Notes
The record gives the reactivity of an RNA of 177 nucleotides to DMS and 2A3. 2A3 adducts were read by reverse transcription with SuperScript II with manganese. Reactivities are given for positions 27 through 126. The reactions ran in a buffer of 150 mM KOAc, 10 mM MgCl2 and 150 mM bicine (pH 8.5), at 24 C. For 2A3, 4,714 sequencing reads were counted.
RNA sequence: GGGAACGACUCGAGUAGAGUCGAAAAGUAUUUAUAGAAAGAACAGUGGUUUAGGUGUUUAUAUAUACAACUUUAAGAAUGAUACUUGCAGUGGUAUCUAUCAAGAUAGGCAGGCUAUCAUAGAAAGAAGAUGAUUAUUAUUCGUAAUAAUCAUCUUAAAAGAAACAACAACAACAAC
Reactivity to DMS in 0.01 (KOAc 150mM, MgCl2 10mM, bicine 150mM(pH8.5), 24C), signal-to-noise 9, nucleotides 027 to 126: g000u010a030u020u010u010a050u010a070g000a100a100a130g010a040a050c030a100g010u020g010g010u020u010u020a100g010g010u010g010u000u010u010a030u010a070u010a030u010a060c060a080a140c040u000u010u020a070a100g000a100a040u010g000a020u000a030c010u000u000g010c020a140g030u030g030g040u010a010u000c010u000a090u070c240a060a040g000a010u000a030g000g000c020a010g000g000c260u000a000u000c010a020u010a070g000a080a060a080g020
Reactivity to 2A3 in 0.01 (KOAc 150mM, MgCl2 10mM, bicine 150mM(pH8.5), 24C), signal-to-noise 5, nucleotides 027 to 126: g000u000a090u060u150u020a120u040a060g170a020a150a000g070a050a010c020a070g090u100g110g090u150u100u120a080g020g040u030g030u030u120u000a110u010a010u000a000u010a060c020a050a050c060u090u080u070a100a060g080a090a070u060g000a000u000a010c000u000u040g020c020a080g040u090g160g070u060a000u000c010u010a160u100c020a020a030g000a030u010a020g010g010c000a000g010g000c020u000a000u020c020a010u010a020g110a040a070a010g060